[RMDB]
RNA sequence: GGGAACGACUCGAGUAGAGUCGAAAACUCAACAAUACGGCAGUGAGCGUUGACCAACUCGGCCGGCGCAAAGGGAGCAUUGCCGUUUAUCUAGACGUUUGGCACAAGGAUAUUCUUUCGUUCCUUGACUUGAAGCUGAACAACGGAGACGAGAGACGAAAUAGCCCGAUUUCGAUCGGGCUAUUUCAAAAGAAACAACAACAACAAC
Reactivity to 2A3 in 0.01 (KOAc 150mM, MgCl2 10mM, bicine 150mM(pH8.5), 24C), signal-to-noise 2, nucleotides 027 to 156: c000u030c020a040a110c060a040a070u230a080c000g000g000c000a000g010u000g030a100g030c000g000u000u000g020a020c040c010a150a150c150u050c130g000g000c030c000g020g010c000g020c000a110a160a080g080g030g010a040g040c000a000u000u010g000c000c010g000u000u000u000a070u030c020u010a000g010a070c080g050u010u030u060g000g000c100a000c020a030a000g020g030a010u010a110u190u130c100u080u130u120c080g020u000u000c000c000u010u030g070a080c040u060u150g050a090a040g020c010u000g020a020a000c020a000a060c040g040g000a030g030a020c080g090a060g010a000g050a100c060
Annotation
The data come from the RNA Mapping Database (RMDB), library OK3TST. The record gives the reactivity of an RNA of 207 nucleotides to 2A3. The RNA was probed in 150 mM KOAc, 10 mM MgCl2 and 150 mM bicine (pH 8.5) at 24 C. Values are in units of 0.01, from 0 to 300, in steps of 10.